[RMDB]
This 207-nucleotide RNA was probed chemically with 2A3.

RNA sequence: GGGAACGACUCGAGUAGAGUCGAAAAGGGGUCUCUCCGAAGAACUCCACAAAGCAUCGAUCGUACUGAAGCCUCCACGGUACGGGAGCUUUGGGAGGGAGGAGAGACGGAGGCACCCAAACGGACAAUCGAAUAGUUCGCUAUUCGAUUGUCCGAAGCUCCUAAGAAUCUUCGGAUUCUUAGGAGCAAAAGAAACAACAACAACAAC
Reactivity to 2A3 in 0.01 (KOAc 150mM, MgCl2 10mM, bicine 150mM(pH8.5), 24C), signal-to-noise 1, nucleotides 027 to 156: g040g010g040g010u000c000u010c000u050c000c000g060a150a030g000a000a000c010u030c010c050a300c030a300a000a020g030c010a010u300c090g000a000u000c010g020u000a000c000u030g030a120a030g020c000c000u000c000c020a010c000g000g020u010a000c020g000g000g000a000g030c010u000u000u020g010g000g010a000g000g000g000a000g010g000a000g000a000g020a000c010g000g000a000g000g020c010a040c030c000c020a110a050a020c030g010g000a020c000a000a000u000c000g010a000a010u010a000g040u070u070c300g010c180u010a000u000u000c010g000a000u000u000g000u000c000c000g000a000a000
It was measured as part of the RMDB library RNAMAK.